[RMDB]
RNA sequence: GGGAACGACUCGAGUAGAGUCGAAAAACCUUAUUUUGAGAAGCUGAGGGAUUUGGCCCGUAGAAGCUUCAGCAACCGACUUUAAAUAGCACGGUGCUAAUACCAACGAGCAACUCGAAUGAUAAGUAAAACGUUGACAAGUUCGCUUGUCAACGAACUACAGAGGUUACUUCGGUAACCUCUGUAGAAAAGAAACAACAACAACAAC
Reactivity to 2A3 in 0.01 (KOAc 150mM, MgCl2 10mM, bicine 150mM(pH8.5), 24C), signal-to-noise 1, nucleotides 027 to 156: a000c030c000u030u120a160u080u140u140u240g040a040g000a030a010g050c020u000g010a010g000g000g000a010u000u000u000g000g000c000c020c000g000u110a010g020a020a000g000c000u000u000c000a000g040c000a000a020c000c060g080a000c000u130u090u190a050a170a220u130a180g000c010a000c000g000g010u000g000c000u000a010a010u040a140c020c000a060a030c130g030a010g050c060a110a130c070u030c110g090a110a090u120g070a050u050a090a080g040u130a110a100a030a030c010g000u000u000g000a000c000a000a000g010u050u070c240g070c150u000u000g000u000c000a000a010c000g000a010a000
Reactivity to DMS in 0.01 (KOAc 150mM, MgCl2 10mM, bicine 150mM(pH8.5), 24C), signal-to-noise 1, nucleotides 027 to 156: a110c050c020u000u000a090u000u000u000u000g020a150g010a080a300g000c020u000g000a060g000g000g020a240u010u000u000g020g020c000c000c000g010u000a090g030a180a100g000c030u000u000c020a050g020c060a090a080c010c000g010a090c000u040u030u000a070a120a150u000a070g050c050a070c010g030g010u000g020c010u010a070a090u000a080c010c020a240a110c160g040a060g010c000a080a260c050u020c020g000a110a070u000g000a170u000a080a080g020u000a060a140a110a220c080g020u000u000g000a000c000a010a010g000u000u000c300g060c020u020u000g000u000c010a000a000c000g000a010a070